[RMDB]
RNA sequence: GGGAACGACUCGAGUAGAGUCGAAAAACACAAACACACAUGCACGCCUCAUUUGAAGUUACUGAAGCACGUUUUGAAUGCUCAUCCGUUGCCUCAACCUUGAUUCUGAAAUCGAACAGAAACUGAGCAAGCCGCUUGGAAAUCACAACAAUACCACCUGCCUCAGGAAAUUCGUUUCCUGAGGCAGAAAAGAAACAACAACAACAAC
Reactivity to 2A3 in 0.01 (KOAc 150mM, MgCl2 10mM, bicine 150mM(pH8.5), 24C), signal-to-noise 1, nucleotides 027 to 156: a000c030a000c030a000a060a050c020a000c050a000c000a100u050g000c010a010c050g010c000c000u030c030a120u080u040u300g070a090a030g000u020u060a050c040u140g030a030a000g030c080a020c080g040u120u000u050u040g180a110a010u160g000c000u010c110a030u000c080c020g120u070u020g000c000c000u020c010a000a040c000c000u070u090g030a120u150u000c000u040g070a120a120a000u150c060g000a000a000c020a030g000a060a140a090c000u030g030a050g000c000a020a020g010c000c080g070c110u030u050g040g040a000a160a000u140c070a020c000a020a160c050a100a020u070a170c000c080a000c000
Description:
Structure probing data (2A3) for a 207-nucleotide construct. The 2A3 profile rests on 418 reads. Conditions: 150 mM KOAc, 10 mM MgCl2 and 150 mM bicine (pH 8.5), 24 C. Source: RMDB library OK3TST, as collected in RNAgym.